[RMDB]
RNA sequence: GGGAACGACUCGAGUAGAGUCGAAAAAGUCUAUUCGUAGACUCUGUGUACCUUUGUGCCAUCGCUUGUCAGCUGGAGAAGGGAUCCCAUUGGGAUCCCGUAACAGCUUGGAUUUAGGAAGAUGGCACUCUGGUUUAAAUCGCACUUCGGUGCGAAAAUUUGUACAGUACUUCGGUACUGUACAAAUAAAAGAAACAACAACAACAAC
Reactivity to 2A3 in 0.01 (KOAc 150mM, MgCl2 10mM, bicine 150mM(pH8.5), 24C), signal-to-noise 2, nucleotides 027 to 156: a000g010u000c010u030a030u100u180c210g090u080a010g000a000c020u040c110u140g250u050g040u120a020c000c000u000u040u000g010u010g010c010c020a000u000c010g030c180u000u070g010u030c000a000g020c000u010g000g030a020g000a010a010g010g000g000a010u010c030c030c090a230u280u300g000g000g000a000u000c000c000c000g000u000a000a000c000a000g000c020u000u060g090g000a060u220u140u130a030g050g030a050a300g000a140u000g000g000c000a000c000u010c000u000g000g000u000u000u000a080a100a030u040c000g000c000a010c020u050u080c290g130g000u000g000c000g000a060a000a000
Reactivity to DMS in 0.01 (KOAc 150mM, MgCl2 10mM, bicine 150mM(pH8.5), 24C), signal-to-noise 2, nucleotides 027 to 156: a050g010u000c010u000a030u000u020c200g040u000a040g010a020c000u000c030u000g020u000g000u000a120c010c030u000u000u000g040u000g020c000c000a020u000c000g000c070u060u030g010u010c050a070g000c030u000g000g010a120g000a210a300g000g000g020a010u000c030c020c050a300u000u000g080g050g020a000u000c010c000c020g010u000a020a300c020a000g010c020u000u000g050g010a060u000u000u000a060g020g020a110a060g000a020u000g010g010c000a000c010u000c020u000g020g020u000u010u010a070a120a200u000c020g000c010a030c010u000u010c220g080g050u000g010c010g020a000a000a020